Structure probing data (DMS) for a 207-nucleotide construct. It was measured as part of the RMDB library M2RFPK.

RNA sequence: GGGAACGACUCGAGUAGAGUCGAAAACAGUUAGCCCAGACCUUCAAGGCUACGGUGCGUUGCGACGCACGGUCUGAUUCUUCACAACGACGUUCACCGCGUCUUCUUCCAUCCCCCUGGGGCAGUGUAUAACCAGCAGCCUUCGGGCUGCUGGUAACAAGGGGUAUCAGUUCGCUGAUACCCCUUGAAAAGAAACAACAACAACAAC
Reactivity to DMS in 0.01 (KOAc 150mM, MgCl2 10mM, bicine 150mM(pH8.5), 24C), signal-to-noise 1, nucleotides 027 to 156: c050a160g050u000u000a080g050c010c020c030a090g010a030c010c020u030u000c060a090a110g010g040c010u000a040c060g030g000u000g000c060g020u000u010g000c090g010a080c050g000c030a040c030g040g030u000c010u000g000a180u000u000c020u010u000c040a080c060a090a150c020g000a100c040g000u000u000c030a060c020c030g000c050g000u000c030u000u010c040u000u000c050c010a150u010c010c000c000c050c040u010g010g030g020g020c010a080g040u000g020u000a050u000a040a140c000c000a030g040c030a010g010c000c010u000u000c300g070g020g040c000u000g000c000u000g000g010u000a000a050